The record gives the reactivity of an RNA of 207 nucleotides to DMS and 2A3. For DMS the reverse transcriptase was MarathonRT. For 2A3 the reverse transcriptase was SuperScript II with manganese. The data come from the RNA Mapping Database (RMDB), library PDB130. 2A3 is a SHAPE reagent: it acylates the 2'-hydroxyl of flexible nucleotides of all four kinds. The reactions ran in a buffer of 150 mM KOAc, 10 mM MgCl2 and 150 mM bicine (pH 8.5), at 24 C. The 2A3 profile rests on 591 reads.
[RMDB]
RNA sequence: GGGAACGACUCGAGUAGAGUCGAAAAAGCCAAAUGCCUCGUCAUCUAAUUAGUGACGCGCAUGAAUGGAUCAAUGAGAUUCCCACUGUCCCUAACUACUAUACAGCGAAACCACUGCAAGGGGAACGGGCCUUGCAAAAACAGCGGGGAAAGAAGAGAUAUAGCAGGGCUUCGGCCCUGCUAUAUCAAAAGAAACAACAACAACAAC
Reactivity to DMS in 0.01 (KOAc 150mM, MgCl2 10mM, bicine 150mM(pH8.5), 24C), signal-to-noise 1, nucleotides 027 to 156: a110g020c080c030a040a100a030u000g040c100c000u010c030g000u000c010a000u000c010u000a150a190u000u000a040g030u010g030a070c010g000c300g030c040a030u000g000a150a200u000g010g000a060u010c070a090a120u000g040a150g030a300u000u000c000c010c000a080c070u000g010u010c030c000c000u000a130a090c040u000a040c010u000a090u030a080c000a000g000c000g000a150a080a210c100c030a070c080u000g000c000a040a010g000g040g000g030a100a130c040g030g000g060c020c010u000u000g000c000a010a010a020a010a030c000a050g040c000g030g000g010g000a020a080a150g000a050a090g000a210
Reactivity to 2A3 in 0.01 (KOAc 150mM, MgCl2 10mM, bicine 150mM(pH8.5), 24C), signal-to-noise 1, nucleotides 027 to 156: a010g040c010c000a050a000a050u010g010c030c040u110c080g000u000c000a050u020c070u100a170a100u230u090a090g040u040g020a010c010g000c010g020c020a000u010g040a190a180u070g000g000a050u100c070a070a070u110g000a070g000a150u000u020c000c000c000a000c000u040g070u080c000c000c000u030a100a150c000u060a100c030u060a110u100a290c100a040g040c020g100a070a020a000c010c050a050c170u070g000c000a010a010g000g000g000g000a000a060c070g040g100g000c000c010u000u000g000c000a000a000a000a000a200c080a010g010c050g000g000g000g030a010a020a010g000a010a020g060a000